[RMDB]
RNA sequence: GGGAACGACUCGAGUAGAGUCGAAAAGCUUUCUUUCGAGGUCUUCCGCGUCUUUUCUUGCUUGGAUCCAUUUCUCGAGGACGUCCUCCCUUCCUCCCCUCCGGGUCCUCUUCGUCUCGGACUGGCUACGCGCGCAUGUUCGCAUGCGCGAAAAGAAACAACAACAACAAC
Reactivity to 2A3 in 0.01 (KOAc 150mM, MgCl2 10mM, bicine 150mM(pH8.5), 24C), signal-to-noise 4, nucleotides 027 to 129: g020c050u070u070u020c010u020u110u060c040g040a040g010g050u030c010u020u030c050c010g040c070g100u080c060u020u100u060u020c040u060u090g020c000u010u030g020g040a030u090c030c000a090u090u100u020c010u010c030g040a030g020g040a110c010g060u030c010c010u010c040c000c000u020u050c000c000u010c000c000c000c010u030c010c000g000g000g000u010c000c020u000c000u010u050c010g090u000c000u000c000g010g010a040c010u030g000g010c030u060a020c050g020
Reactivity to DMS in 0.01 (KOAc 150mM, MgCl2 10mM, bicine 150mM(pH8.5), 24C), signal-to-noise 2, nucleotides 027 to 129: g040c130u030u020u000c030u000u000u000c040g040a060g020g070u010c070u030u000c020c070g000c140g060u000c030u020u020u000u040c040u010u050g030c070u010u000g060g000a120u030c000c000a000u040u050u010c040u030c030g020a100g030g020a170c100g000u050c000c020u090c030c010c020u000u000c030c040u020c010c020c050c020u000c060c040g000g000g000u040c000c050u030c050u030u030c070g000u030c060u040c030g000g020a040c040u020g010g040c040u000a060c160g010

The record gives the reactivity of an RNA of 170 nucleotides to 2A3 and DMS.
It was measured as part of the RMDB library 15KLIB.
2A3 adducts were read by reverse transcription with SuperScript II with manganese.
The reactions ran in a buffer of 150 mM KOAc, 10 mM MgCl2 and 150 mM bicine (pH 8.5), at 24 C.